[RMDB]
This 177-nucleotide RNA was probed chemically with DMS and 2A3. Values cover nucleotides 27 to 126. 2A3 is a SHAPE reagent: it acylates the 2'-hydroxyl of flexible nucleotides of all four kinds. It was measured as part of the RMDB library OK2TST. The RNA was probed in 150 mM KOAc, 10 mM MgCl2 and 150 mM bicine (pH 8.5) at 24 C.

RNA sequence: GGGAACGACUCGAGUAGAGUCGAAAACAUUGGGUUUAGGGAUAAUCAGGCUCGAACUGAUGACUUCCACCACGUCAAGGUGACACUCUACCACUGAGUUAUACCCCUGCCCCCAUCGAGAGAUAGAGUUGGUAAUACUCUUCGGAGUAUUACCAACAAAAGAAACAACAACAACAAC
Reactivity to DMS in 0.01 (KOAc 150mM, MgCl2 10mM, bicine 150mM(pH8.5), 24C), signal-to-noise 4, nucleotides 027 to 126: c050a120u000u000g000g010g020u000u000u000a150g010g010g000a000u000a150a030u000c010a010g000g050c050u010c200g020a150a140c020u000g000a020u000g000a200c270u010u000c000c010a060c100c080a070c230g020u000c060a030a060g010g010u000g020a300c230a050c030u000c000u000a010c040c090a080c090u000g010a020g010u000u000a100u000a280c080c000c010c100u000g000c000c000c010c010c010a050u000c050g000a110g000a120g000a030u000a100g000a140
Reactivity to 2A3 in 0.01 (KOAc 150mM, MgCl2 10mM, bicine 150mM(pH8.5), 24C), signal-to-noise 4, nucleotides 027 to 126: c040a080u040u090g060g000g040u060u090u210a090g030g010g010a020u000a040a010u030c000a000g020g010c060u110c290g090a240a040c010u010g000a020u010g010a020c030u040u010c010c000a010c000c020a020c050g120u070c060a050a040g020g020u010g010a010c010a000c050u000c010u000a060c000c060a140c230u120g000a000g010u000u020a040u050a070c020c000c000c030u090g110c010c010c010c020c000a030u060c040g050a080g010a000g000a070u060a100g080a020